Structure probing data (2A3 and DMS) for a 177-nucleotide construct. Values are in units of 0.01, from 0 to 300, in steps of 10. The 2A3 profile rests on 2,132 reads.
RNA sequence: GGGAACGACUCGAGUAGAGUCGAAAACAGCGACAGGACAUAUUCUAAGGCCUCUUCCCGCGCUUUUUCGGCCUCGACCAACCUAGGGUCGCGGGCCGAGACUUCGCUGUGCCCUGGCCUCGCGGGAGCCUAUUGGUUGGUUCGCCAACCAAUAGGCAAAAGAAACAACAACAACAAC
Reactivity to 2A3 in 0.01 (KOAc 150mM, MgCl2 10mM, bicine 150mM(pH8.5), 24C), signal-to-noise 2, nucleotides 027 to 126: c010a000g010c020g000a030c060a120g010g050a070c080a180u260a130u180u120c130u160a080a070g020g010c040c080u120c080u130u040c000c010c000g000c000g040c020u130u150u010u040u040c000g020g010c010c010u000c000g000a000c010c010a050a140c040c070u210a120g160g000g060u010c000g020c120g010g000g000c020c020g010a000g000a010c010u000u000c010g040c000u000g000u010g050c020c030c000u000g010g010c020c010u040c040g010c000g000g010g000a000
Reactivity to DMS in 0.01 (KOAc 150mM, MgCl2 10mM, bicine 150mM(pH8.5), 24C), signal-to-noise 2, nucleotides 027 to 126: c030a010g010c000g000a020c230a060g000g000a110c230a180u020a100u000u000c120u010a080a120g000g000c010c070u010c120u010u010c010c010c030g020c080g000c300u000u000u000u000u000c010g000g000c000c000u020c000g010a000c010c000a050a030c230c190u030a170g030g010g010u000c040g000c270g000g000g000c000c000g000a010g000a080c040u000u000c010g010c010u000g020u000g000c040c000c020u000g020g000c050c030u000c060g030c030g030g000g020a170